[RMDB]
The record gives the reactivity of an RNA of 177 nucleotides to 2A3 and DMS.
For 2A3, 1,471 sequencing reads were counted.
Conditions: 150 mM KOAc, 10 mM MgCl2 and 150 mM bicine (pH 8.5), 24 C.
For 2A3 the reverse transcriptase was SuperScript II with manganese.
For DMS, 1,119 sequencing reads were counted.
Values cover nucleotides 27 to 126.
It was measured as part of the RMDB library M2PK90.
DMS adducts were read by reverse transcription with MarathonRT.

RNA sequence: GGGAACGACUCGAGUAGAGUCGAAAAUAAAAUGGUAAGAACGGUUCCAAAGGAGCCGAAGGUCAUAGCUAUGGCAUCGAUCUAAAAUCUUAUCAAUUAGGUGAGGAGCUUGGCACUGAUCAAAAAAACUCCUUUCAAGAUUCGUCUUGAAAGGAGUAAAAGAAACAACAACAACAAC
Reactivity to 2A3 in 0.01 (KOAc 150mM, MgCl2 10mM, bicine 150mM(pH8.5), 24C), signal-to-noise 2, nucleotides 027 to 126: u130a020a090a030a050u100g000g000u010a030a000g000a090a000c010g000g010u010u000c010c000a260a220a230g030g010a040g020c040c040g010a030a020g010g000u020c000a030u060a060g020c040u120a130u260g110g000c000a010u020c070g030a000u020c010u100a020a040a170a120u000c000u040u000a020u020c000a030a170u070u050a040g010g000u010g060a050g030g060a030g090c020u030u060g020g010c040a000c050u050g010a080u060c100a020a130a030a000a000a000
Reactivity to DMS in 0.01 (KOAc 150mM, MgCl2 10mM, bicine 150mM(pH8.5), 24C), signal-to-noise 2, nucleotides 027 to 126: u020a030a060a080a140u000g000g010u020a030a020g000a050a230c020g010g000u000u000c000c010a030a130a230g020g000a010g000c000c000g030a090a010g020g000u010c020a030u000a220g000c010u030a070u000g050g020c050a050u020c230g040a040u020c040u010a040a090a120a150u000c030u000u000a040u000c020a010a100u010u000a060g010g000u000g000a080g000g010a070g030c050u000u000g000g010c010a040c120u000g000a050u000c000a020a000a050a100a080a020